This 177-nucleotide RNA was probed chemically with 2A3 and DMS. The DMS profile rests on 66,664 reads. 2A3 adducts were read by reverse transcription with SuperScript II with manganese. Values are in units of 0.01, from 0 to 300, in steps of 10. The reactions ran in a buffer of 150 mM KOAc, 10 mM MgCl2 and 150 mM bicine (pH 8.5), at 24 C.
RNA sequence: GGGAACGACUCGAGUAGAGUCGAAAAUGGGAGGUGCACAGCAGUGGCUUGGCCGCCCCAACGCGCCUACAGCCCGCUCUGGGGACAGCCGUCUUUUGGCAGAGUCUGCCUCUGCAGUGGUGGCAGCCAUGUAAGAAAUGUUCGCAUUUCUUACAUGAAAAGAAACAACAACAACAAC
Reactivity to 2A3 in 0.01 (KOAc 150mM, MgCl2 10mM, bicine 150mM(pH8.5), 24C), signal-to-noise 9, nucleotides 027 to 126: u090g020g020g020a060g020g020u100g040c040a030c030a080g050c020a040g060u070g130g000c020u060u100g050g000c010c010g020c020c000c000c000a130a140c030g020c010g000c010c000u070a090c070a040g030c010c020c010g000c030u040c050u040g020g000g000g040a050c020a020g010c010c010g070u090c060u050u220u100u150g060g000c020a010g010a010g070u040c060u110g050c010c000u010c010u020g000c020a050g030u050g080g020u040g020g000c000a010g010c010
Reactivity to DMS in 0.01 (KOAc 150mM, MgCl2 10mM, bicine 150mM(pH8.5), 24C), signal-to-noise 9, nucleotides 027 to 126: u010g000g010g010a080g010g010u000g020c060a090c120a080g020c070a080g030u000g010g010c030u000u010g010g010c030c060g000c030c010c030c050a060a090c100g010c160g010c030c030u000a080c150a120g000c040c050c020g010c070u000c070u000g010g000g000g010a090c100a070g010c030c030g010u000c050u000u000u000u010g010g010c030a050g000a070g000u010c090u010g010c090c010u000c010u000g010c040a080g010u000g010g010u000g000g000c030a110g000c100